[RMDB]
Structure probing data (DMS and 2A3) for a 207-nucleotide construct.
Reactivities are given for positions 27 through 156.
For 2A3 the reverse transcriptase was SuperScript II with manganese.
The DMS profile rests on 2,350 reads.
RNA sequence: GGGAACGACUCGAGUAGAGUCGAAAAAUAAGAUAUAAAGAUCUGUUCUCUCAGACUUCAGUGGUAAUGUCCAAGAGCUCCUUACUUGACAACGUGUUCCAGGAUCUGAAGGCCAAAAUGUCUGACGAUGGCAACUUGUGUUUUCUCAGCCAACCUAACCGUCCUAUUUAUUCGUAAAUAGGACGGUAAAAGAAACAACAACAACAAC
Reactivity to DMS in 0.01 (KOAc 150mM, MgCl2 10mM, bicine 150mM(pH8.5), 24C), signal-to-noise 2, nucleotides 027 to 156: a200u010a090a050g020a080u000a210u000a120a040a230g000a040u000c000u020g040u010u000c010u010c020u000c030a130g000a030c010u000u020c050a140g020u000g030g040u010a060a080u000g030u000c030c010a060a140g000a110g010c010u000c050c050u000u000a120c040u000u010g050a150c070a070a120c050g010u000g020u010u000c010c020a120g020g030a070u000c040u000g010a100a080g010g000c030c030a050a030a070a080u000g020u000c000u000g030a140c160g020a120u000g020g020c020a000a180c060u000u010g030u000g010u000u010u000u020c010u000c030a170g010c060c050a040a090c060c070u000a220
Reactivity to 2A3 in 0.01 (KOAc 150mM, MgCl2 10mM, bicine 150mM(pH8.5), 24C), signal-to-noise 2, nucleotides 027 to 156: a000u120a030a050g030a000u100a010u090a250a240a030g040a100u030c040u050g000u080u030c030u030c000u020c070a020g020a100c000u040u030c050a070g020u060g080g050u130a180a080u150g020u010c080c010a070a040g020a020g090c010u030c060c020u120u090a070c090u110u100g060a020c020a120a100c170g040u050g080u110u020c040c000a010g000g070a060u000c010u140g080a050a040g050g000c010c010a000a070a040a090u070g000u000c000u000g030a090c110g040a030u080g000g020c010a060a030c080u080u050g020u000g060u090u050u080u000c020u020c000a030g030c020c030a060a060c050c070u090a010